[RMDB]
Structure probing data (2A3 and DMS) for a 207-nucleotide construct.
RNA sequence: GGGAACGACUCGAGUAGAGUCGAAAACAAAAGUGUGGUGCGAUUUUUGCUGAUGCUUGGAAAGUUGUUGAAGAACUGCUUUGUUCUCUUAAACUUACAUACAAGCAAAUUUAUGAUGUAGUAGCAUCACUCUGCACUUCUGCUUUUACUAUUAUGGCAUGUUAUACAACUUCGGUUGUAUAACAUGAAAAGAAACAACAACAACAAC
Reactivity to 2A3 in 0.01 (KOAc 150mM, MgCl2 10mM, bicine 150mM(pH8.5), 24C), signal-to-noise 9, nucleotides 027 to 156: c020a000a050a010a000g020u010g010u010g010g010u010g010c040g040a050u030u040u040u080u080g010c030u050g030a090u080g030c040u020u030g030g030a140a030a020g010u020u040g060u100u070g050a100a050g000a010a010c010u040g110c190u300u240u240g000u000u000c000u000c000u040u110a060a030a000c000u010u020a030c020a050u110a050c010a020a000g010c000a000a020a050u170u210u080a140u110g070a040u070g040u080a200g110u060a020g090c000a000u010c000a000c020u000c010u020g000c000a000c000u040u040c040u090g060c020u060u100u040u070a110c100u080a100u300u050a150u160g120g000
Reactivity to DMS in 0.01 (KOAc 150mM, MgCl2 10mM, bicine 150mM(pH8.5), 24C), signal-to-noise 3, nucleotides 027 to 156: c010a030a000a010a010g010u000g030u010g020g020u000g030c000g000a120u000u000u010u000u000g020c010u010g010a090u010g000c010u000u010g000g000a170a080a030g000u000u000g000u000u000g020a100a070g010a030a020c030u000g020c260u000u000u000g000u000u000c010u000c020u000u010a060a030a020c020u000u000a080c040a150u000a130c040a040a050g020c010a020a020a100u010u000u000a080u020g010a100u010g030u000a270g010u000a070g020c040a060u000c010a040c040u000c020u010g020c000a020c020u010u000c010u000g020c010u000u000u000u000a110c060u000a120u010u000a130u010g020g010
For DMS the reverse transcriptase was MarathonRT. The RNA was probed in 150 mM KOAc, 10 mM MgCl2 and 150 mM bicine (pH 8.5) at 24 C. For DMS, 10,483 sequencing reads were counted. The data come from the RNA Mapping Database (RMDB), library OK3TST.